RNA sequence: GGGAACGACUCGAGUAGAGUCGAAAAUACGCUCGCAUCCCGAUUUCAAAUUGCUACACAAUUUACAAGCAGACAUUUGCUACAAGUUCGUCCUUUGGGAUUAUGAACGUAGCAAUAUUUAUGGUACGUAUGAUUACUCGUUCGCGAGUAAUCAUACAAAAGAAACAACAACAACAAC
Reactivity to 2A3 in 0.01 (KOAc 150mM, MgCl2 10mM, bicine 150mM(pH8.5), 24C), signal-to-noise 3, nucleotides 027 to 126: u020a000c050g010c040u030c050g030c020a050u020c020c010c000g010a040u070u110u030c020a050a040a060u090u020g000c030u140a030c070a000c000a110a090u070u100u140a120c070a080a040g070c000a020g030a040c040a050u030u040u030g000c000u010a000c010a030a160g000u010u000c000g000u000c010c020u070u150u300g140g010g000a030u070u030a120u280g000a010a000c010g000u010a000g000c000a000a000u050a010u000u120u010a050u050g100g010u090a020c070
Reactivity to DMS in 0.01 (KOAc 150mM, MgCl2 10mM, bicine 150mM(pH8.5), 24C), signal-to-noise 2, nucleotides 027 to 126: u010a060c100g010c060u000c050g030c080a110u000c000c000c000g000a110u010u000u040c120a020a040a040u010u000g000c080u040a040c150a210c070a060a060u000u010u000a070c150a100a130g010c060a030g000a120c130a070u000u000u010g020c010u010a030c010a040a100g020u000u000c000g020u000c000c000u000u010u030g030g010g000a010u000u000a030u020g020a000a010c020g020u000a000g010c000a010a010u010a030u000u000u000a100u010g030g000u010a060c170
About this RNA:
The record gives the reactivity of an RNA of 177 nucleotides to 2A3 and DMS. For DMS the reverse transcriptase was MarathonRT. For 2A3 the reverse transcriptase was SuperScript II with manganese. Conditions: 150 mM KOAc, 10 mM MgCl2 and 150 mM bicine (pH 8.5), 24 C. The data come from the RNA Mapping Database (RMDB), library 15KREP.